[RMDB]
RNA sequence: GGGAACGACUCGAGUAGAGUCGAAAAGGGGAUAGGUAGGAUUAAACAGCAGGCCGUGGUCGCACCCAACCACGUUAAAUAGGGUGCAAAAACACAACUGCCAACGAAUACGCCUACGCUUUGGCAGCCUAAGCGUGCUGCCACGCACCUUUAGACCGUCACACUGAAUGUUCGCAUUCAGUGUGACAAAAGAAACAACAACAACAAC
Reactivity to 2A3 in 0.01 (KOAc 150mM, MgCl2 10mM, bicine 150mM(pH8.5), 24C), signal-to-noise 1, nucleotides 027 to 156: g020g090g000g080a030u090a040g070g040u040a040g010g010a070u110u070a020a030a160c020a040g010c010a010g020g000c130c000g010u000g000g000u010c000g010c000a000c000c000c000a040a050c010c000a020c130g140u080u100a000a000a000u020a010g000g000g000u000g010c010a120a000a000a000a000c160a070c080a150a010c040u020g030c040c020a020a020c030g090a070a010u030a030c080g000c010c000u000a010c050g010c070u090u120u030g000g000c010a000g000c000c010u140a150a060g140c100g200u250g010c020u030g010c010c000a000c040g020c000a030c000c000u000u000u010a040g010a020c020c000